RNA sequence: GGGAACGACUCGAGUAGAGUCGAAAAGUGACUGAAGCCUGCUCGGUCAGAGCGAACCCGUAACAGCGAACAACAUCGUUCGUUUCUCCCGUCAAGCCGCCCCUGUGGCUGCCUGACACUCUUAACGCCUAUUAUACAACUUCGGUUGUAUAAUAGGAAAAGAAACAACAACAACAAC
Reactivity to 2A3 in 0.01 (KOAc 150mM, MgCl2 10mM, bicine 150mM(pH8.5), 24C), signal-to-noise 5, nucleotides 027 to 126: g030u030g040a030c020u040g050a080a020g050c010c040u030g030c030u020c020g030g060u110c050a020g020a010g030c000g020a040a030c040c000c000g030u070a120a030c020a070g030c010g020a010a010c030a020a050c020a240u160c110g000u010u010c010g000u000u060u000c030u020c000c020c000g010u000c010a000a000g010c010c020g010c000c000c000c020u050g090u190g060g000c000u000g000c000c000u000g000a010c010a050c050u110c040u090u080a130a060c070g040
Reactivity to DMS in 0.01 (KOAc 150mM, MgCl2 10mM, bicine 150mM(pH8.5), 24C), signal-to-noise 5, nucleotides 027 to 126: g020u000g010a050c040u000g000a100a150g000c080c040u000g000c030u000c020g000g020u010c070a120g010a100g020c050g020a060a110c030c020c040g000u010a080a070c200a060g000c010g010a020a040c020a110a150c210a080u000c120g030u000u000c030g010u000u000u010c060u010c020c030c050g000u000c010a010a030g010c010c070g000c010c010c030c260u000g010u010g020g010c000u000g000c010c040u000g010a020c010a130c190u000c060u000u000a060a120c300g000
Conditions: 150 mM KOAc, 10 mM MgCl2 and 150 mM bicine (pH 8.5), 24 C. The record gives the reactivity of an RNA of 177 nucleotides to 2A3 and DMS. Values cover nucleotides 27 to 126.